Structure probing data (DMS) for a 177-nucleotide construct. The DMS profile rests on 748 reads. Source: RMDB library TTRDEL, as collected in RNAgym.
[RMDB]
RNA sequence: GGGAACGACUCGAGUAGAGUCGAAAAGAUAUGGAUACCAGGGAGAAGUACUCGGAAACGAGUAUACUUCGCGAAACCUGAUCCUAAGUCAAAUCGACAGACUUAGGUUCGCCUAAGUCUGUCGAAAUCCAAGCCAUUACUUCGGUAAUGGCUUGGAAAAAGAAACAACAACAACAAC
Reactivity to DMS in 0.01 (KOAc 150mM, MgCl2 10mM, bicine 150mM(pH8.5), 24C), signal-to-noise 1, nucleotides 027 to 126: g020a030u010a300u010g000g030a010u000a150c210c010a000g000g000g050a170g010a000a000g000u000a020c000u000c000g010g000a060a150a200c010g000a020g020u000a020u000a080c000u000u000c010g020c210g020a100a170a120c000c000u010g000a020u000c000c000u000a020a100g030u000c030a080a110a180u020c000g010a020c000a020g000a000c000u000u000a010g020g010u000u010c210g020c000c000u010a020a000g000u000c010u000g020u010c000g000a010a030a070